[RMDB]
The record gives the reactivity of an RNA of 207 nucleotides to 2A3. The 2A3 profile rests on 959 reads. The reactions ran in a buffer of 150 mM KOAc, 10 mM MgCl2 and 150 mM bicine (pH 8.5), at 24 C.
RNA sequence: GGGAACGACUCGAGUAGAGUCGAAAAACAGUCAGUACGCUGACUGAGGGAAACGGGAGCCGGGCUUGGGACAAGAGCCAUCCCAAGUCCAAGGCCAAGUAGGCUCUAGUGAUGGUACGCCAUCCCAAAAACUGGUCUACCUUCGGGUAGACCAGAAGUCUCCCCAUAUCUUCGGAUAUGGGGAGACAAAAGAAACAACAACAACAAC
Reactivity to 2A3 in 0.01 (KOAc 150mM, MgCl2 10mM, bicine 150mM(pH8.5), 24C), signal-to-noise 1, nucleotides 027 to 156: a040c010a000g000u010c000a010g020u050a040c220g020c110u000g010a010c000u000g010a050g020g040g010a080a190a060c130g000g030g030a070g020c000c030g000g010g000c010u020u040g000g000g000a000c050a000a050g000a010g030c010c000a010u000c000c000c000a000a010g010u000c000c010a020a020g020g000c060c050a040a020g080u110a010g060g000c000u000c030u020a080g030u040g110a020u020g010g010u020a020c120g010c010c000a000u020c000c030c020a010a040a030a010a040c000u000g000g000u000c000u000a000c000c000u020u030c230g070g000g010u000a000g020a000c000c000a000g000a000a000